[RMDB]
RNA sequence: GGGAACGACUCGAGUAGAGUCGAAAACCCAGUUCCGGGGCCGUUCACUGGAUCCGAAGCCUCAAGAAGGAUAAUAUAGGCACUCCAUACCCUACUCCGACUCAAUACGUCCCCGUCGUACAGAAUGCAAGGGCAUCCCUGUUCGCAGGGAUGCCAAGAGGUAAUACGGGUUCGCCCGUAUUACCUCAAAAGAAACAACAACAACAAC
Reactivity to 2A3 in 0.01 (KOAc 150mM, MgCl2 10mM, bicine 150mM(pH8.5), 24C), signal-to-noise 1, nucleotides 027 to 156: c010c020c000a030g030u130u050c000c000g000g000g000g020c000c000g030u080u090c000a010c130u070g070g000a120u060c020c040g030a090a050g000c000c000u170c200a060a050g130a090a090g030g050a030u060a190a090u140a120u120a180g020g000c050a020c060u130c020c000a110u030a090c000c010c030u010a020c050u010c020c070g020a080c010u080c040a090a070u060a170c020g080u050c000c000c000c040g000u000c050g040u080a100c030a030g180a190a020u130g100c020a000a100g000g000g000c000a000u000c000c000c000u000g010u020u050c150g000c160a000g060g000g010a000u000g000c000c000a000a000